[RMDB]
RNA sequence: GGGAACGACUCGAGUAGAGUCGAAAAUCUUACUCUUUUCUGUAAAGAGGAGACUGCUGGACUCGCCGCCCGAGUCCGAGCUGGGCCAAGUCCGAGCGAAGGGACGCGGUGGGAGGAACAGCUCCCGAGAGGGGAUGAAUGGGUAAAGAGCAUUGGACUAAUUAACGAGCUUCGGCUCGUUAAUUAGAAAAGAAACAACAACAACAAC
Reactivity to 2A3 in 0.01 (KOAc 150mM, MgCl2 10mM, bicine 150mM(pH8.5), 24C), signal-to-noise 1, nucleotides 027 to 156: u040c020u040u110a300c000u050c000u010u030u160u100c110u230g140u210a050a040a000g020a010g020g000a000g010a020c060u050g010c000u010g010g000a030c020u040c050g150c050c000g020c010c020c020g000a070g040u000c000c000g020a030g010c010u110g020g000g000c050c190a170a120g020u090c040c060g080a010g040c020g220a190a000g050g000g000a000c030g000c050g000g000u050g010g010g000a020g010g000a170a010c010a020g020c000u000c000c020c000g030a130g040a020g000g040g000g020a040u090g070a050a110u110g020g000g060u090a060a070a000g040a020g000c040a060u040u160g020g010a040